[RMDB]
RNA sequence: GGGAACGACUCGAGUAGAGUCGAAAAUUGGUGCGUUUACGAGCGCGGCCUUCACGGCGGCUUCGACGGCAGACUGAAUGAGCAAAGCCACUUCUGGCGUCACGCCAGGCGCCGUAGGUAUACCAGCGCCGGGUAGUCGGUUCGCCGACUACCCGGCAAAAGAAACAACAACAACAAC
Reactivity to 2A3 in 0.01 (KOAc 150mM, MgCl2 10mM, bicine 150mM(pH8.5), 24C), signal-to-noise 1, nucleotides 027 to 126: u100u030g000g000u030g040c040g070u060u000u000a010c010g000a170g090c100g000c000g170g030c000c000u110u120c180a050c280g000g030c000g040g040c000u020u010c160g020a030c070g000g060c010a010g000a030c090u100g060a200a210u130g090a090g000c020a130a020a000g000c000c000a000c000u000u010c000u020g140g060c000g070u070c040a030c070g060c070c000a000g000g120c000g000c000c000g000u000a000g070g070u120a100u000a040c000c000a000g080c000
The data come from the RNA Mapping Database (RMDB), library OK1LIB. An RNA of 177 nucleotides, treated with 2A3 and read out base by base. The 2A3 profile rests on 442 reads. Values cover nucleotides 27 to 126.